[RMDB]
RNA sequence: GGGAACGACUCGAGUAGAGUCGAAAAUUCACUCUUGGUGCUCAGGGGAGGGGAAGUAUCAUCUUUCUCAGUACAAAUAGGAAAAUUAAACUUGCCACAGUUUCCUCAAAGUAUGGCAAGAUUAUAAGGAACUCAGAUGAGAAGGAGGCCACACUCCCUCCAUUGCAUUAUUCGUAAUGCAAUGGAGAAAAGAAACAACAACAACAAC
Reactivity to 2A3 in 0.01 (KOAc 150mM, MgCl2 10mM, bicine 150mM(pH8.5), 24C), signal-to-noise 4, nucleotides 027 to 156: u080u020c010a030c050u050c010u060u070g050g000u040g040c020u020c080a030g020g000g000g000a030g050g010g000g010a040a030g040u080a060u190c070a050u040c030u020u050u000c030u010c020a030g050u090a100c050a080a140a080u110a080g040g060a030a160a000a050u090u060a030a070a040c020u020u010g010c010c000a040c010a110g050u040u140u070c020c030u120c050a110a100a020g100u090a080u070g010g000c000a000a000g010a000u050u050a070u030a080a060g040g010a030a010c040u050c110a040g010a140u070g020a070g010a060a020g000g000a000g010g000c000c020a050c010a020c040u040c020c000
Reactivity to DMS in 0.01 (KOAc 150mM, MgCl2 10mM, bicine 150mM(pH8.5), 24C), signal-to-noise 2, nucleotides 027 to 156: u010u010c020a050c020u000c050u010u000g000g000u000g010c030u010c070a110g010g020g030g000a070g000g010g000g020a070a080g020u010a100u010c040a080u000c010u000u000u000c030u000c000a070g000u000a300c050a070a080a110u000a090g020g000a070a070a100a170u000u040a060a080a170c020u000u000g000c010c010a020c020a040g000u010u000u000c080c090u000c110a040a050a100g010u000a040u010g000g010c010a020a030g010a080u000u000a040u000a050a070g010g010a140a150c030u000c050a120g020a130u030g000a110g000a070a040g010g010a080g000g010c040c060a060c070a050c020u000c030c010